Structure probing data (2A3 and DMS) for a 177-nucleotide construct. The RNA was probed in 150 mM KOAc, 10 mM MgCl2 and 150 mM bicine (pH 8.5) at 24 C. 2A3 adducts were read by reverse transcription with SuperScript II with manganese. The 2A3 profile rests on 3,846 reads. As a SHAPE reagent, 2A3 marks flexible, mostly unpaired nucleotides at the ribose 2'-OH. Reactivities are given for positions 27 through 126. The data come from the RNA Mapping Database (RMDB), library OK2TRN.

RNA sequence: GGGAACGACUCGAGUAGAGUCGAAAACUGAUAAGAAAGGAGAGUCUAUUCUUGAUCCAAUGAUUCGAAGAGGAGUCCUUAAGUGGAUGAAAGACGGAAUUAUUGAUUGUCAUGAGCUGCUAACAUCAUCUGACAAGUUUUUCGAAACUUGUCAGAUAAAAGAAACAACAACAACAAC
Reactivity to 2A3 in 0.01 (KOAc 150mM, MgCl2 10mM, bicine 150mM(pH8.5), 24C), signal-to-noise 4, nucleotides 027 to 126: c010u000g020a050u070a230a060g080a110a050a020g030g050a100g020a000g100u040c010u070a120u100u030c000u010u050g040a020u010c020c020a020a010u040g010a020u020u040c040g030a080a030g040a060g120g050a020g040u020c000c000u230u030a200a230g300u150g030g000a030u050g050a090a030a000g060a000c060g000g040a010a010u060u020a020u020u080g030a040u010u190g010u060c040a020u030g040a010g010c080u110g000c020u060a040a030c020a090u120c000
Reactivity to DMS in 0.01 (KOAc 150mM, MgCl2 10mM, bicine 150mM(pH8.5), 24C), signal-to-noise 5, nucleotides 027 to 126: c040u000g010a100u010a060a100g000a080a120a100g010g000a130g000a090g010u000c060u000a140u010u000c020u000u000g010a060u000c170c040a030a070u000g000a020u000u000c020g010a090a130g010a100g010g000a260g000u010c010c010u000u000a100a100g030u000g010g010a020u000g010a090a110a070g000a070c130g020g000a030a020u010u000a030u000u010g000a080u010u010g010u010c030a050u000g000a140g020c080u010g020c070u000a050a060c100a060u010c100